[RMDB]
RNA sequence: GGGAACGACUCGAGUAGAGUCGAAAAACCCCGCGUACCGGGGAUGGUGCGGCUCCGGUGGUUCGGGCCUGUCGCGGUGGGUGUAGUUUGUCGCGCCAGGGGGCGCACAGGCAGGGGGAAGACGUAAGGAGCAUCUAGGGUUCGCCUUAGAUGCUCCAAAAGAAACAACAACAACAAC
Reactivity to DMS in 0.01 (KOAc 150mM, MgCl2 10mM, bicine 150mM(pH8.5), 24C), signal-to-noise 4, nucleotides 027 to 126: a090c050c000c000c050g020c130g020u030a070c030c020g020g000g020g000a070u020g000g020u010g000c030g010g000c030u010c010c030g000g000u010g020g010u030u000c070g010g010g000c050c040u010g000u000c080g010c050g020g000u020g000g020g000u000g010u030a100g000u000u020u010g010u010c110g020c020g010c010c010a240g030g010g010g010g010c010g020c030a020c030a040g000g000c020a130g000g000g000g000g000a070a050g000a080c100g010u030a120a150